[RMDB]
The record gives the reactivity of an RNA of 177 nucleotides to DMS and 2A3. Conditions: 150 mM KOAc, 10 mM MgCl2 and 150 mM bicine (pH 8.5), 24 C. For DMS the reverse transcriptase was MarathonRT. The data come from the RNA Mapping Database (RMDB), libraries RFM100 and RFMREP. 2A3 adducts were read by reverse transcription with SuperScript II with manganese.

RNA sequence: GGGAACGACUCGAGUAGAGUCGAAAACAAUAUUUAUUGAUGUUACAAGGCUUUAUUUCUUCAGUUUUCAUCACGUUUAACUAGUAAUAGUGACCUUUGAAUAACUCUGUGUUUUCAUUAAAUCGUACCUGUUACUCAAGUUCGCUUGAGUAACAGGAAAAGAAACAACAACAACAAC
Reactivity to DMS in 0.01 (KOAc 150mM, MgCl2 10mM, bicine 150mM(pH8.5), 24C), signal-to-noise 2, nucleotides 027 to 126: c030a100a070u090a080u030u020u050a070u000u000g000a080u000g010u000u000a020c100a100a160g020g000c050u000u000u000a020u010u010u020c000u030u000c150a030g010u000u010u000u030c020a060u060c160a090c190g000u020u000u000a040a030c020u000a050g000u020a070a050u000a000g010u020g000a070c060c010u000u000u010g040a050a040u000a010a040c010u020c100u000g000u010g020u000u000u000u000c030a050u040u000a050a100a100u050c060g000u050a100
Reactivity to 2A3 in 0.01 (KOAc 150mM, MgCl2 10mM, bicine 150mM(pH8.5), 24C), signal-to-noise 5, nucleotides 027 to 126: c020a020a070u120a170u200u280u060a120u110u160g040a040u100g010u030u010a030c030a080a030g000g000c000u030u080u100a020u000u030u050c030u110u110c110a010g020u020u020u000u070c060a110u170c090a020c060g010u030u060u020a020a010c010u000a010g020u020a030a030u010a020g070u040g130a300c000c000u060u050u070g050a080a020u050a060a000c000u000c030u070g090u040g060u100u060u010u020c040a050u040u230a050a050a020u070c010g000u000a040